[RMDB]
RNA sequence: GGGAACGACUCGAGUAGAGUCGAAAACUAUCGAUCUUGUCGAGCAACUCGGCCUCGGCGCGCAGAUCGUCAGCGUUACCCCAUAGGGCUGUCCACGCUUUGUGGAUCAUGAUGAACGCGCCGUCGGUACCGCCCACUUAUUCGUAAGUGGGCGGUAAAAAGAAACAACAACAACAAC
Reactivity to DMS in 0.01 (KOAc 150mM, MgCl2 10mM, bicine 150mM(pH8.5), 24C), signal-to-noise 2, nucleotides 027 to 126: c120u000a050u000c060g010a030u000c050u010u020g020u000c010g010a040g000c100a090a130c170u000c120g000g000c030c040u000c000g020g000c020g000c070g030c130a110g000a130u000c010g020u010c040a020g000c180g000u000u010a140c110c030c020c130a120u000a120g000g010g020c030u000g020u010c050c070a040c060g020c170u010u020u000g000u000g000g000a000u030c120a060u000g000a050u000g030a070a110c010g020c010g000c010c010g030u020c110g000g010
Reactivity to 2A3 in 0.01 (KOAc 150mM, MgCl2 10mM, bicine 150mM(pH8.5), 24C), signal-to-noise 2, nucleotides 027 to 126: c060u020a030u090c010g030a010u000c030u120u130g090u110c010g000a040g010c050a040a140c040u000c060g050g000c020c000u040c000g010g030c030g000c030g020c040a050g020a300u040c020g040u030c010a050g030c050g210u140u120a100c040c020c010c000a060u170a080g090g010g040c010u060g090u290c070c040a030c020g050c140u030u090u280g010u020g010g020a000u030c030a070u050g040a030u020g000a040a010c000g040c020g000c060c000g050u040c030g030g040